The record gives the reactivity of an RNA of 177 nucleotides to DMS. The DMS profile rests on 860 reads. Reactivities are given for positions 27 through 126.

RNA sequence: GGGAACGACUCGAGUAGAGUCGAAAAUCUGAAAAACACCCUCUUUCAGAUGUGGGAAAAACAUGGCUCAGAGGUGUUCAAGAAAUGUUGCAUUUAUUUAUUACUUACAAAGCUGUAAGUCAGCUUAUCAGUAUGACCAGUUCGCUGGUCAUACUGAAAAAGAAACAACAACAACAAC
Reactivity to DMS in 0.01 (KOAc 150mM, MgCl2 10mM, bicine 150mM(pH8.5), 24C), signal-to-noise 1, nucleotides 027 to 126: u010c010u010g010a050a040a020a080a070c030a230c050c030c030u000c040u000u020u000c000a030g030a030u000g010u010g010g010g000a080a140a070a070a030c100a020u000g010g020c030u020c060a070g000a050g000g020u000g030u010u010c100a120a080g000a060a090a040u000g010u010u000g020c040a050u000u000u010a040u010u030u010a130u030u010a090c040u000u010a030c070a060a130a060g030c110u010g000u000a040a070g040u020c130a040g010c030u000u000a070
DMS adducts were read by reverse transcription with MarathonRT.